[RMDB]
RNA sequence: GGGAACGACUCGAGUAGAGUCGAAAAGAUAUGGAAAGAUAGCUCUUGGAUUUAUACACGAAGAUAGCCUACAUCGGAAACGAUGUAGGCUAUUGGAGUGUAUUGUCAGAGCGUCUUUCCUAAGUCAGAUCACUACUGUGUUCGCACAGUAGUGAUCAAAAGAAACAACAACAACAAC
Reactivity to DMS in 0.01 (KOAc 150mM, MgCl2 10mM, bicine 150mM(pH8.5), 24C), signal-to-noise 2, nucleotides 027 to 126: g000a060u010a300u010g010g000a000a010a010g000a000u000a110g050c000u000c000u000u000g010g030a040u010u000u010a010u000a020c000a000c000g010a300a270g040a000u000a000g010c000c000u000a000c000a000u010c010g000g000a130a030a260c000g000a010u000g000u000a000g010g010c000u000a000u000u000g000g000a300g000u000g040u000a010u000u000g000u010c000a060g000a010g020c000g000u000c000u000u000u000c000c000u000a020a020g000u030c100a200
The record gives the reactivity of an RNA of 177 nucleotides to DMS. It was measured as part of the RMDB library TTRINS. DMS adducts were read by reverse transcription with MarathonRT. The DMS profile rests on 1,333 reads.